[RMDB]
Conditions: 150 mM KOAc, 10 mM MgCl2 and 150 mM bicine (pH 8.5), 24 C. Structure probing data (2A3 and DMS) for a 207-nucleotide construct. For DMS, 4,449 sequencing reads were counted. For 2A3 the reverse transcriptase was SuperScript II with manganese. Values cover nucleotides 27 to 156. For DMS the reverse transcriptase was MarathonRT.
RNA sequence: GGGAACGACUCGAGUAGAGUCGAAAACUGUCCUGGAUGGAAGUACAGCCGUACUUCAUCCUCUACGGCUGUAGAGGCAUCCAGAUCGUGUAGCGAUGUGAUGGCACUACUCGCGUAGUGCAUGUGUGACGCGAGUCACACCAUCACGACAGACACGCGAUGCUACUAAGUUCGCUUAGUAGCAUCGAAAAGAAACAACAACAACAAC
Reactivity to 2A3 in 0.01 (KOAc 150mM, MgCl2 10mM, bicine 150mM(pH8.5), 24C), signal-to-noise 4, nucleotides 027 to 156: c010u010g000u000c000c000u000g000g000a000u010g050g030a100a030g040u010a000c010a040g140c080c090g030u010a030c030u070u070c030a160u060c030c000u010c010u000a020c030g220g010c130u150g010u000a010g020a010g020g030c020a000u000c000c000a000g000a000u000c010g000u040g050u060a010g050c010g000a000u000g000u010g000a010u010g030g000c010a000c010u010a000c000u040c140g090c080g030u000a010g000u010g000c010a020u050g010u000g010u020g010a000c000g020c040g050a020g000u000c000a010c000a010c010c010a000u000c000a000c010g000a000c000a000g020a020c070a010c070g070
Reactivity to DMS in 0.01 (KOAc 150mM, MgCl2 10mM, bicine 150mM(pH8.5), 24C), signal-to-noise 2, nucleotides 027 to 156: c020u000g020u010c020c010u010g010g000a010u000g000g040a070a070g000u000a020c010a220g010c120c150g020u000a030c080u010u000c090a150u010c060c020u010c010u000a020c000g020g060c120u010g010u030a030g010a140g080g000c000a020u000c010c030a050g010a000u000c000g020u000g000u000a080g000c020g000a020u000g010u000g000a030u010g000g000c020a030c010u000a030c000u000c270g000c300g030u000a020g020u000g000c050a010u010g030u010g010u000g020a000c000g000c300g010a300g020u000c030a020c020a010c000c000a050u000c000a010c000g010a030c040a030g020a080c050a030c080g000